[RMDB]
This 207-nucleotide RNA was probed chemically with 2A3. The 2A3 profile rests on 706 reads. Conditions: 150 mM KOAc, 10 mM MgCl2 and 150 mM bicine (pH 8.5), 24 C. As a SHAPE reagent, 2A3 marks flexible, mostly unpaired nucleotides at the ribose 2'-OH. Source: RMDB library OK3TST, as collected in RNAgym.
RNA sequence: GGGAACGACUCGAGUAGAGUCGAAAAGAGGACGAUGAAGCCUAAUCAAGCAACGCUCGACGGCGCACGACAGACCUCGCUCGGCUCGAUCGCGUCGACGGAGCCGGUCGUCGACGGGGUCGCCCAAGUCCUCGUCUCGAGUGACACCAACUCGCGGCUAUUCCGGAAUCUUCGGAUUCCGGAAUAGAAAAGAAACAACAACAACAAC
Reactivity to 2A3 in 0.01 (KOAc 150mM, MgCl2 10mM, bicine 150mM(pH8.5), 24C), signal-to-noise 1, nucleotides 027 to 156: g000a000g000g000a000c000g140a190u170g080a150a000g000c000c040u080a080a070u060c020a020a000g070c090a100a130c160g010c010u070c060g000a010c010g000g010c010g030c030a050c060g090a020c040a080g110a070c000c000u000c000g040c070u010c000g000g000c020u040c130g010a030u030c040g000c020g080u030c000g000a020c020g140g070a030g020c010c000g000g040u120c020g030u010c010g000a000c000g000g030g050g000u010c020g000c000c000c000a040a040g000u010c000c010u000c010g030u040c040u030c040g010a000g020u060g040a050c010a050c150c000a080a030c040u010c010g020c020g060g010